[RMDB]
RNA sequence: GGGAACGACUCGAGUAGAGUCGAAAACCUGGGGCAGGGCAGGUGGCACUCAUGGAGUGGCCAGAUGGGCACUUCUCAAAGAGGAAGGCUGUUUGGGCCUUUGGAGCCUUUCCCAGACAUGCAUAGACUCAUGAUUGCUAUUCGUAGCAAUCAUGAGAAAAGAAACAACAACAACAAC
Reactivity to 2A3 in 0.01 (KOAc 150mM, MgCl2 10mM, bicine 150mM(pH8.5), 24C), signal-to-noise 6, nucleotides 027 to 126: c010c000u010g040g000g000g030c050a040g000g030g010c020a030g010g100u050g060g010c060a020c060u030c000a090u130g070g010a020g020u050g010g130c020c010a090g080a280u260g000g020g020c030a040c030u030u000c030u020c040a150a170a010g070a020g040g010a040a010g040g000c020u030g060u160u120u110g100g020g010c000c000u050u040u070g030g060a040g020c000c000u020u040u030c020c000c010a000g060a070c060a040u140g040c010a040u050a160g090a060
Reactivity to DMS in 0.01 (KOAc 150mM, MgCl2 10mM, bicine 150mM(pH8.5), 24C), signal-to-noise 3, nucleotides 027 to 126: c010c000u000g000g010g010g000c030a160g000g000g000c060a030g000g040u010g000g000c060a230c020u010c030a130u030g000g000a030g030u000g000g000c030c020a230g030a080u090g050g030g030c030a060c040u000u000c020u020c260a040a100a070g030a050g020g000a040a060g000g060c000u000g000u000u030u020g000g000g020c000c020u000u030u020g010g010a190g000c070c020u000u000u020c000c000c040a080g020a190c160a110u050g030c160a060u020a040g000a270